[RMDB]
RNA sequence: GGGAACGACUCGAGUAGAGUCGAAAAUUGUGAGUGGGACGGUUAAGUCAAAACAGUGACGAGAGAUUAACUUAUUUGCUGAGUUCUAUUUACAUUCAGAAUAUAGUGCUAGAAAAGGCCCAGAUAAGACCAACCUUAUUUUCGAAUAAGGUUGGUCAAAAGAAACAACAACAACAAC
Reactivity to DMS in 0.01 (KOAc 150mM, MgCl2 10mM, bicine 150mM(pH8.5), 24C), signal-to-noise 2, nucleotides 027 to 126: u010u020g020u000g000a040g020u000g030g020g010a050c030g040g000u010u010a100a070g010u010c060a010a060a080a120c160a070g020u000g000a080c050g000a100g000a140g010a210u000u020a090a050c040u000u000a220u010u000u000g000c070u000g010a150g020u000u000c090u040a030u020u000u020a030c070a060u010u000c070a020g000a080a110u020a070u000a070g020u010g000c070u030a050g000a070a100a120a170g020g010c000c030c050a060g000a100u010a080a110
Reactivity to 2A3 in 0.01 (KOAc 150mM, MgCl2 10mM, bicine 150mM(pH8.5), 24C), signal-to-noise 1, nucleotides 027 to 126: u120u050g000u000g100a050g030u040g010g010g000a020c030g030g030u100u110a140a020g030u150c040a000a020a040a060c010a000g040u040g050a020c030g000a000g000a000g020a170u210u040a060a020c000u020u100a120u050u090u090g020c010u000g080a010g020u070u030c020u030a140u020u020u010a020c010a050u030u120c040a010g060a090a000u050a000u030a120g120u090g000c020u050a010g080a040a040a030a090g040g010c010c020c020a030g000a060u120a040a040